Conditions: 150 mM KOAc, 10 mM MgCl2 and 150 mM bicine (pH 8.5), 24 C. The record gives the reactivity of an RNA of 207 nucleotides to DMS and 2A3.
RNA sequence: GGGAACGACUCGAGUAGAGUCGAAAAGCGCGCGUUAUUGUAAACAACAAUGAGCGCCUAAAUGUGUGCUUUGGGGAAACACACAGUGCUAAUCAAGAAGAAAAAACGUAUUAUCUUCAAUACUGUAUAUCUAAUAUAUGGACAGCGCCCAUCGUGGUCCUAGUAGGACCUUCGGGUCCUACUAGGAAAAAGAAACAACAACAACAAC
Reactivity to DMS in 0.01 (KOAc 150mM, MgCl2 10mM, bicine 150mM(pH8.5), 24C), signal-to-noise 1, nucleotides 027 to 156: g000c010g060c010g030c030g090u000u000a030u000u010g030u000a190a170a150c030a010a030c020a020a000u030g000a030g000c010g040c000c040u010a020a070a040u000g020u000g020u000g040c010u000u000u000g000g080g050g010a300a060a010c030a050c030a000c050a010g010u000g040c030u000a100a120u010c030a080a200g040a060a130g000a000a090a050a040a210a120c100g040u000a050u000u000a150u000c040u000u020c010a020a040u020a040c010u030g000u000a170u000a130u000c020u040a060a110u000a170u010a060u000g010g000a070c010a040g000c100g030c040c010c000a030u010c020g010u000g010g000
Reactivity to 2A3 in 0.01 (KOAc 150mM, MgCl2 10mM, bicine 150mM(pH8.5), 24C), signal-to-noise 2, nucleotides 027 to 156: g060c080g000c010g000c070g090u030u050a010u000u000g020u030a060a190a100c020a070a000c000a000a140u020g000a020g010c020g000c000c000u070a080a110a070u010g020u000g000u000g000c080u100u070u140g000g030g010g000a000a050a000c020a000c020a040c000a030g000u050g010c030u090a060a150u160c060a080a040g050a020a020g030a050a130a030a090a000a000c050g030u080a110u100u030a100u150c030u100u080c010a050a120u030a190c030u050g040u040a070u030a010u100c010u060a100a100u130a090u030a040u140g030g000a020c020a010g030c010g040c000c040c040a040u080c090g000u040g050g010